Structure probing data (2A3 and DMS) for a 177-nucleotide construct. For 2A3 the reverse transcriptase was SuperScript II with manganese. For DMS, 17,008 sequencing reads were counted. 2A3 is a SHAPE reagent: it acylates the 2'-hydroxyl of flexible nucleotides of all four kinds.
RNA sequence: GGGAACGACUCGAGUAGAGUCGAAAAAGUUACUUCCGGUAACUUGGAGUUUGUAGCAAUGUAAGUUUCGUCCUAAAAGGACUCAUCAGGUAGCCUAAUAGACUACGACUUAUGCAGUAGGUCGUGAGAUCUACUUAUUCUUCGGAAUAAGUAGAUCAAAAGAAACAACAACAACAAC
Reactivity to 2A3 in 0.01 (KOAc 150mM, MgCl2 10mM, bicine 150mM(pH8.5), 24C), signal-to-noise 6, nucleotides 027 to 126: a000g010u010u010a010c010u150u070c130c110g020g000u000a010a000c000u020u020g040g020a060g020u080u120u100g070u090a030g000c060a100a080u070g010u080a080a110g020u010u040u090c050g010u030c010c010u070a120a110a020a040g010g020a080c010u010c030a100u030c020a010g100g060u090a020g010c000c010u090a150a120u090a100g080a070c040u040a020c100g020a010c000u030u020a030u170g100c060a080g080u050a020g000g020u010c000g010u010g020a060
Reactivity to DMS in 0.01 (KOAc 150mM, MgCl2 10mM, bicine 150mM(pH8.5), 24C), signal-to-noise 9, nucleotides 027 to 126: a020g010u000u000a000c020u000u010c220c160g010g020u000a010a020c020u000u000g000g010a110g000u000u000u010g020u000a070g000c080a090a070u000g010u000a040a050g000u000u000u000c110g010u000c020c010u000a050a070a110a150g000g000a040c020u000c050a070u000c100a060g010g010u000a040g010c020c020u010a080a130u000a090g000a070c060u000a050c010g000a030c020u000u000a050u000g020c190a090g010u000a050g010g000u000c010g020u000g000a150